[RMDB]
RNA sequence: GGGAACGACUCGAGUAGAGUCGAAAAGUGUGCUAUACUAGUAAGGUUGAAUGAAUCAACCCUUGGUGCUUAGCUUCUUUCACCAAGCAUAUUACACGCGGAUAACCGCCAAAGGAGAAAAGAUAAACUGCCCGACGAUUCUUCGGAAUCGUCGGAAGUGACGUCUAUGGUUCGCCAUAGACGUCACAAAAGAAACAACAACAACAAC
Reactivity to 2A3 in 0.01 (KOAc 150mM, MgCl2 10mM, bicine 150mM(pH8.5), 24C), signal-to-noise 2, nucleotides 027 to 156: g020u020g000u010g100c020u060a060u080a280c060u100a120g150u110a160a080g010g010u000u040g050a110a200u210g040a100a110u030c010a000a000c000c000c000u000u020g000g000u000g010c080u090u120a090g010c000u060u010c010u010u100u010c000a000c000c000a010a000g000c010a000u020a030u080u110a010c010a010c030g060c030g000g040a100u040a180a220c010c000g060c000c020a100a030a000g050g040a060g030a030a070a020a020g070a000u040a070a140a040c100u100g000c000c010c000g000a000c000g010a000u000u020c000u020u040c190g020g000a000a000u000c000g000u000c010g000g000a000a000